[RMDB]
RNA sequence: GGGAACGACUCGAGUAGAGUCGAAAAGCUACGAUAUCGGCAUUAGCCGCGCGCGGCCGGCUAAUGCAUCGGCGCGCCGGCAUCGAUAUAUGCGCUACGGCCGCGGCAUUAUACGGCCGGCUAAUGCGUUCAACCAAGUAUUCGUACUUGGUUGAACAAAAGAAACAACAACAACAAC
Reactivity to 2A3 in 0.01 (KOAc 150mM, MgCl2 10mM, bicine 150mM(pH8.5), 24C), signal-to-noise 2, nucleotides 027 to 126: g000c020u100a060c100g070a070u050a060u200c060g090g000c080a100u100u100a000g000c000c010g040c060g040c020g000c050g160g030c020c000g020g050c060u120a140a040u160g020c020a030u040c010g060g030c010g000c040g000c000c030g060g030c010a010u020c030g030a000u000a030u040a000u180g010c010g000c080u080a050c010g010g000c000c020g000c050g060g000c050a050u070u120a100u150a130c060g030g000c010c020g000g000c010u070a060a010u070g030c020
Reactivity to DMS in 0.01 (KOAc 150mM, MgCl2 10mM, bicine 150mM(pH8.5), 24C), signal-to-noise 3, nucleotides 027 to 126: g010c040u000a090c120g020a080u010a080u010c060g010g000c150a050u000u000a050g020c000c010g000c200g030c080g020c100g030g030c010c000g020g000c030u000a060a060u000g010c020a020u000c040g010g000c010g010c070g020c040c050g010g020c020a020u000c060g010a100u000a050u010a070u010g010c130g010c030u010a110c050g020g000c010c000g000c080g000g020c070a030u000u010a060u000a070c030g000g000c020c010g010g010c040u000a040a050u000g010c070